Source: RMDB library OK2TST, as collected in RNAgym. This 177-nucleotide RNA was probed chemically with DMS and 2A3. The reactions ran in a buffer of 150 mM KOAc, 10 mM MgCl2 and 150 mM bicine (pH 8.5), at 24 C.
RNA sequence: GGGAACGACUCGAGUAGAGUCGAAAAGGCGAUCAUUGAAGGGCAAUUGCUGCCGCCCGUUUCAUUGGCGCUGCUGAAUAAACUCGCCGAGAGAGCGCCCGUUGAGCGCAUUCGUUUAGCGGCAGAAGCCAUUACCCGUAUUCGUACGGGUAAUGGCAAAAGAAACAACAACAACAAC
Reactivity to DMS in 0.01 (KOAc 150mM, MgCl2 10mM, bicine 150mM(pH8.5), 24C), signal-to-noise 2, nucleotides 027 to 126: g010g010c020g010a070u000c030a050u010u010g030a100a060g000g020g020c050a080a150u010u010g010c130u000g000c020c130g010c000c030c030g010u000u010u010c070a070u000u000g010g000c070g010c040u000g040c070u000g020a060a040u000a090a120a160c020u000c040g010c040c030g020a080g000a130g000a150g000c020g000c000c010c100g020u000u010g010a090g070c020g010c090a140u000u030c090g000u000u000u000a020g000c000g000g000c010a090g000a080a170
Reactivity to 2A3 in 0.01 (KOAc 150mM, MgCl2 10mM, bicine 150mM(pH8.5), 24C), signal-to-noise 1, nucleotides 027 to 126: g040g000c010g040a150u030c080a100u010u150g000a030a000g020g020g020c050a030a050u200u220g000c040u070g030c050c050g000c000c010c000g000u040u080u040c030a070u020u020g010g000c000g000c000u100g090c020u040g070a060a050u110a190a100a010c030u070c030g000c050c040g040a000g000a010g010a010g060c010g040c000c000c050g060u130u220g060a100g000c020g010c120a120u080u140c020g090u090u070u180a060g000c000g000g000c020a030g060a080a030